[RMDB]
RNA sequence: GGGAACGACUCGAGUAGAGUCGAAAAUGCUCACCUAUGGAAGGUGUAGAACAAAUACCACCACUCCAGCUACUCAACGUCGACGGAGCCGGCGUUCCAUUGCGAUUGCUACGCAUAGCACAGGAGGCUCAUACAGUCAAUUCGUUGACUGUAUGAGAAAAGAAACAACAACAACAAC
Reactivity to 2A3 in 0.01 (KOAc 150mM, MgCl2 10mM, bicine 150mM(pH8.5), 24C), signal-to-noise 6, nucleotides 027 to 126: u080g010c000u010c010a020c000c010u080a140u240g240g100a130a040g000g010u040g050u210a020g030a110a030c040a030a100a030u130a060c020c020a020c010c020a060c020u000c010c010a010g000c020u040a040c020u040c130a050a010c020g020u020c010g030a050c070g100g030a030g020c020c010g010g000c010g010u040u000c040c030a100u060u080g020c010g070a080u040u240g060c050u090a050c030g000c050a040u030a020g010c030a030c020a070g000g040a020g040g000
Reactivity to DMS in 0.01 (KOAc 150mM, MgCl2 10mM, bicine 150mM(pH8.5), 24C), signal-to-noise 8, nucleotides 027 to 126: u010g000c020u000c010a040c010c020u010a290u010g000g020a160a050g010g010u000g010u010a020g010a070a090c120a050a080a130u010a150c060c020a090c100c070a120c040u000c020c020a090g010c020u020a040c120u010c120a050a060c080g020u000c030g010a090c040g020g000a100g020c030c020g000g000c020g000u000u010c080c070a110u000u010g010c020g010a140u010u000g010c100u010a080c050g020c030a060u000a040g010c030a100c180a110g010g010a070g000g020

Notes: Source: RMDB library OK2TST, as collected in RNAgym. Chemical mapping of a 177-nucleotide RNA with 2A3 and DMS. The reactions ran in a buffer of 150 mM KOAc, 10 mM MgCl2 and 150 mM bicine (pH 8.5), at 24 C.